This 177-nucleotide RNA was probed chemically with DMS and 2A3. The reactions ran in a buffer of 150 mM KOAc, 10 mM MgCl2 and 150 mM bicine (pH 8.5), at 24 C. The 2A3 profile rests on 870 reads. Reactivities are given for positions 27 through 126. For DMS, 1,040 sequencing reads were counted.

[RMDB]
RNA sequence: GGGAACGACUCGAGUAGAGUCGAAAAACCAUCCUAUUCGUAGGAUGGUGCACCAUUGCCGAUUGUAUAUAAUACCGGAGGCGGAAAAGCGGUUCAAAUAAGGAACUUGUCAGUUCGCUGACAAGAAGCAUAAGACACACUUCGGUGUGUCUUAUGCAAAAGAAACAACAACAACAAC
Reactivity to DMS in 0.01 (KOAc 150mM, MgCl2 10mM, bicine 150mM(pH8.5), 24C), signal-to-noise 2, nucleotides 027 to 126: a000c010c000a000u000c000c000u000a000u010u020c190g030u010a000g000g000a000u000g000g010u000g010c100a210c000c000a230u010u030g010c020c020g000a300u000u000g020u000a000u010a080u000a150a120u010a010c050c070g000g010a290g000g010c000g020g010a060a010a070a110g020c030g010g020u000u010c070a050a070a100u020a050a050g000g000a030a240c000u000u010g000u000c000a000g020u000u020c270g020c010u000g000a000c000a010a010g000a050a130
Reactivity to 2A3 in 0.01 (KOAc 150mM, MgCl2 10mM, bicine 150mM(pH8.5), 24C), signal-to-noise 1, nucleotides 027 to 126: a000c000c000a010u000c020c020u030a010u030u120c190g060u070a000g010g000a000u000g040g000u000g020c020a070c050c000a080u040u240g030c000c000g020a020u030u000g040u020a050u030a020u050a220a240u020a000c000c000g040g000a030g010g070c170g070g000a040a090a010a020g060c070g030g080u100u120c050a000a170a000u130a180a130g160g020a050a040c000u000u000g000u000c000a010g000u070u050c190g000c110u000g010a000c000a000a000g060a000a000